RNA sequence: GGGAACGACUCGAGUAGAGUCGAAAACAUUCUUAGACAGUGAAUCAGUUCUGGUGGAGAAGCAUUAAUCACUUACAGGGCUAUUGGUGGAAGCUUCUUUCAGUUAUUAGUGUGGAAUGAUGAGUCAGCAUAGGCCUAAUUUCGAUUAGGCCUAUGCAAAAGAAACAACAACAACAAC
Reactivity to 2A3 in 0.01 (KOAc 150mM, MgCl2 10mM, bicine 150mM(pH8.5), 24C), signal-to-noise 2, nucleotides 027 to 126: c010a060u060u070c000u050u080a050g030a070c010a110g080u030g140a060a120u040c020a100g030u120u020c010u040g050g020u040g030g080a070g000a030a000g000c000a010u050u080a060a050u100c010a010c030u000u040a020c030a100g160g000g000c040u120a090u140u170g050g000u030g030g060a060a010g000c000u070u090c000u020u080u040c020a030g000u000u020a030u060u080a070g070u010g070u100g040g040a070a050u040g060a090u050g000a010g050u070c010a020
Reactivity to DMS in 0.01 (KOAc 150mM, MgCl2 10mM, bicine 150mM(pH8.5), 24C), signal-to-noise 2, nucleotides 027 to 126: c090a120u000u000c030u010u010a110g000a040c050a080g020u010g020a080a040u000c080a050g020u000u000c030u000g020g030u000g000g010a080g010a070a070g010c020a070u010u000a050a070u010c060a070c030u000u000a110c160a120g000g010g000c060u000a110u000u000g010g010u010g010g010a110a100g000c020u000u000c010u020u000u010c080a050g010u000u000a050u000u000a050g010u010g020u000g020g010a080a050u000g010a070u000g030a160g000u000c030a130

This 177-nucleotide RNA was probed chemically with 2A3 and DMS. DMS adducts were read by reverse transcription with MarathonRT. For 2A3, 1,199 sequencing reads were counted.